An RNA of 207 nucleotides, treated with 2A3 and DMS and read out base by base. The reactions ran in a buffer of 150 mM KOAc, 10 mM MgCl2 and 150 mM bicine (pH 8.5), at 24 C. High DMS reactivity at an A or C suggests that its Watson-Crick edge is free.

RNA sequence: GGGAACGACUCGAGUAGAGUCGAAAACAACAGCAGGAUCAUCCCACUUGUCAUCAAGCAAUGGUGCUGUCUGUUGAGUUACGGUAUCACUUGGAAGAACACCAAUAAAACAAUCAUACACCCCCCAGUGAUCGGCAAAUGCAUCAGUAUGAUAUUCACAUGGUGAAGGUUUCGACCUUCACCAUGUAAAAGAAACAACAACAACAAC
Reactivity to 2A3 in 0.01 (KOAc 150mM, MgCl2 10mM, bicine 150mM(pH8.5), 24C), signal-to-noise 2, nucleotides 027 to 156: c000a000a010c010a000g020c000a000g080g130a070u030c010a020u030c000c040c030a050c040u050u040g100u180c120a290u160c010a160a020g020c020a070a070u020g000g000u060g170c020u000g130u170c030u010g030u000u010g030a050g000u040u130a030c050g000g080u120a050u100c010a010c070u050u080g070g010a160a120g010a090a030c030a030c090c040a120a060u080a110a070a000a030c140a050a060u070c010a000u030a060c040a300c040c000c000c000c000c000a000g000u010g020a010u070c000g040g000c010a110a080a070u130g010c010a110u020c010a020g030u010a040u030g030a010u010a100u060u110c050
Reactivity to DMS in 0.01 (KOAc 150mM, MgCl2 10mM, bicine 150mM(pH8.5), 24C), signal-to-noise 2, nucleotides 027 to 156: c000a050a030c000a000g030c000a030g000g030a100u000c010a030u000c010c020c150a010c060u000u000g000u000c180a220u000c070a070a030g010c010a060a060u010g040g050u010g030c000u020g000u000c030u000g000u010u000g020a100g000u000u020a040c040g010g030u000a070u000c010a020c050u000u030g040g020a060a130g030a060a060c080a030c070c030a040a120u010a030a090a060a090c100a060a060u000c010a070u000a130c030a220c010c010c010c000c000c050a070g000u000g000a000u000c030g010g030c040a160a110a050u000g000c060a070u000c050a050g030u000a050u020g060a080u000a110u010u000c010